[RMDB]
RNA sequence: GGGAACGACUCGAGUAGAGUCGAAAAAGGUGUCCUUCACAUCAUGGUUCUUGGAUGCAUUCAACUAUGCCAUCGCCACGGAGAUGAAUGUGGUCAAUCUCAGCAUUGGUGGGCCGGACUACCUGGAACGAAGCGAACUUUUCGAAGUUCGCUUCGUAAAAGAAACAACAACAACAAC
Reactivity to DMS in 0.01 (KOAc 150mM, MgCl2 10mM, bicine 150mM(pH8.5), 24C), signal-to-noise 2, nucleotides 027 to 126: a020g000g000u000g010u000c000c030u010u000c050a040c010a020u000c010a020u000g020g010u000u010c090u000u010g030g010a040u000g010c010a050u010u000c060a050a100c110u010a060u000g010c040c070a090u000c100g020c130c110a060c090g000g000a040g000a140u000g010a040a040u000g030u000g020g000u000c090a060a030u000c050u000c140a070g020c050a100u000u000g070g020u010g000g010g000c050c090g000g010a030c000u000a020c010c000u010g000g010a130
Reactivity to 2A3 in 0.01 (KOAc 150mM, MgCl2 10mM, bicine 150mM(pH8.5), 24C), signal-to-noise 1, nucleotides 027 to 126: a000g070g000u020g000u020c020c000u020u030c050a040c000a010u000c020a000u020g100g000u110u180c040u040u090g090g000a040u040g020c010a020u030u050c010a030a070c060u060a080u200g050c000c030a080u050c070g030c090c030a050c130g000g020a100g010a070u090g020a060a040u080g020u040g070g050u070c010a050a050u020c020u010c060a060g050c040a040u010u050g000g000u000g000g000g010c020c000g000g020a030c030u050a060c000c000u030g030g040a050
Chemical mapping of a 177-nucleotide RNA with DMS and 2A3. The DMS profile rests on 1,628 reads. The reactions ran in a buffer of 150 mM KOAc, 10 mM MgCl2 and 150 mM bicine (pH 8.5), at 24 C. For 2A3, 1,448 sequencing reads were counted. For 2A3 the reverse transcriptase was SuperScript II with manganese.